[RMDB]
RNA sequence: GGGAACGACUCGAGUAGAGUCGAAAAGACAAUUUCGAUUGUCAUCAACCGUAGGCACUAGUUGGCAUGAACAAUGAUGGAGAUUUCGAAAGAGAUCUCUUGAGUUCAUGAACUACCAACAAGCGUGCCUAAACGGCGCCAGUUCUUUCGAGAACAAACAACAGUCUCAUUUCGAUGAGACUGUUGUAAAAGAAACAACAACAACAAC
Reactivity to DMS in 0.01 (KOAc 150mM, MgCl2 10mM, bicine 150mM(pH8.5), 24C), signal-to-noise 1, nucleotides 027 to 156: g020a080c020a010a040u030u010u000c200g030a080u000u000g020u000c020a120u020c010a050a000c010c000g010u000a020g000g000c000a000c010u000a300g000u000u000g000g020c000a020u000g000a020a080c020a130a070u000g010a200u000g020g000a010g000a020u000u000u000c000g000a170a120a240g030a020g000a020u000c010u010c010u000u000g020a160g020u000u000c000a120u020g040a080a080c050u020a100c010c000a010a010c020a100a190g000c170g000u000g030c020c000u010a000a040a050c010g000g010c000g000c030c000a080g010u000u000c010u010u000u030c120g010a130g020a020a040c050a130a220
Reactivity to 2A3 in 0.01 (KOAc 150mM, MgCl2 10mM, bicine 150mM(pH8.5), 24C), signal-to-noise 3, nucleotides 027 to 156: g000a000c000a010a030u080u150u230c210g140a010u030u020g000u010c010a060u090c020a090a020c000c000g010u050a010g010g000c010a000c000u020a040g010u030u000g000g000c000a010u000g000a000a000c030a100a300u130g030a020u070g010g000a000g000a000u000u010u000c020g020a030a050a040g000a010g000a000u010c000u000c000u000u010g020a000g000u000u000c000a000u000g010a050a020c070u130a090c050c000a000a010c010a020a030g100c090g030u010g000c000c010u000a010a000a000c010g020g000c050g060c050c050a080g010u000u000c040u030u130u110c120g090a040g010a040a020c080a050a140
Chemical mapping of a 207-nucleotide RNA with DMS and 2A3.
High 2A3 reactivity points to a flexible backbone, as in loops and unpaired stretches.
The 2A3 profile rests on 2,848 reads.
Source: RMDB library RNAMAK, as collected in RNAgym.
Conditions: 150 mM KOAc, 10 mM MgCl2 and 150 mM bicine (pH 8.5), 24 C.